[RMDB]
RNA sequence: GGGAACGACUCGAGUAGAGUCGAAAACUUUCACUGGGAGAUUAUGAAGGGUAGAUGCUUUGUGUCUCCAUUGCCUCCUGUGAUGUGACCUCACAUUACAAGCCACUGUGGUUGGAACUGCUGGCAAAAUGGAAAGAACCAGGAAGAACAUCAAAGGAUAGCAUCUAUUGUUCGCAAUAGAUGCUAUAAAAGAAACAACAACAACAAC
Reactivity to DMS in 0.01 (KOAc 150mM, MgCl2 10mM, bicine 150mM(pH8.5), 24C), signal-to-noise 2, nucleotides 027 to 156: c010u000u020u000c030a120c090u040g070g000g040a030g030a090u000u000a050u000g000a070a040g000g020g010u000a160g000a120u000g020c030u000u000u020g040u000g020u000c010u000c030c010a180u000u000g020c030c030u000c020c030u000g040u000g020a010u020g030u000g010a130c140c230u000c010a080c050a050u000u000a010c060a070a140g010c010c000a100c100u030g030u010g030g030u000u010g020g000a100a140c030u000g000c030u000g020g020c030a030a050a060a060u010g010g030a090a070a140g000a100a070c030c020a080g020g000a040a060g020a080a070c050a070u000c060a050a090a140g010g010
Reactivity to 2A3 in 0.01 (KOAc 150mM, MgCl2 10mM, bicine 150mM(pH8.5), 24C), signal-to-noise 4, nucleotides 027 to 156: c040u060u150u090c040a070c100u030g000g090g050a040g010a050u080u140a060u300g080a070a020g080g010g030u170a100g060a170u160g050c030u040u010u100g040u040g000u020c000u000c010c000a040u010u070g040c000c010u060c010c000u040g000u000g020a010u000g040u020g080a160c010c040u190c060a020c000a010u030u050a030c020a060a020g020c020c010a030c060u060g080u120g100g060u100u080g030g020a050a050c020u070g020c010u010g020g000c000a090a010a010a020u100g010g020a080a030a060g040a030a070c020c010a000g040g020a050a050g040a050a020c010a040u150c080a090a020a030g180g020
An RNA of 207 nucleotides, treated with DMS and 2A3 and read out base by base. Source: RMDB library OK3TST, as collected in RNAgym. Values cover nucleotides 27 to 156. For DMS, 3,352 sequencing reads were counted.